[RMDB]
Structure probing data (2A3 and DMS) for a 177-nucleotide construct. 2A3 adducts were read by reverse transcription with SuperScript II with manganese. The data come from the RNA Mapping Database (RMDB), library TTRDES.
RNA sequence: GGGAACGACUCGAGUAGAGUCGAAAAGAUAUGGAUUCCACCGGAGCAACAGCUCCCACUCGGAAACGAGUGUUCGGAGACAUGCUCGUGGAAUCCUAAGUCAAACAUCCCGCUUCGGCGGGAUGAACGUACAUACGCUGUUCGCAGCGUAUGUACGAAAAGAAACAACAACAACAAC
Reactivity to 2A3 in 0.01 (KOAc 150mM, MgCl2 10mM, bicine 150mM(pH8.5), 24C), signal-to-noise 3, nucleotides 027 to 126: g010a010u010a020u060g000g000a000u020u000c020c030a020c140c280g300g030a040g000c160a070a230c070a290g020c000u000c040c000c010a000c000u010c000g000g000a000a010a010c010g000a010g000u030g030u160u270c060g000g000a000g000a010c140a260u300g000c000u010c000g000u010g000g010a000a000u000c000c000u000a000a000g000u000c000a050a080a100c020a020u000c000c020c000g000c020u070u110c300g180g000c030g000g070g000a010u000g020a010a010
Reactivity to DMS in 0.01 (KOAc 150mM, MgCl2 10mM, bicine 150mM(pH8.5), 24C), signal-to-noise 3, nucleotides 027 to 126: g000a020u000a040u030g000g000a020u000u000c000c000a030c100c300g040g030a040g040c020a150a100c220a150g000c000u000c000c000c000a000c000u000c000g020g000a010a010a020c010g020a010g030u000g010u000u010c170g000g000a030g010a030c050a300u010g000c010u010c020g050u010g020g000a010a020u000c000c000u010a000a030g000u000c000a170a140a220c010a010u010c000c000c000g020c020u000u010c210g010g000c000g000g000g000a000u000g000a040a130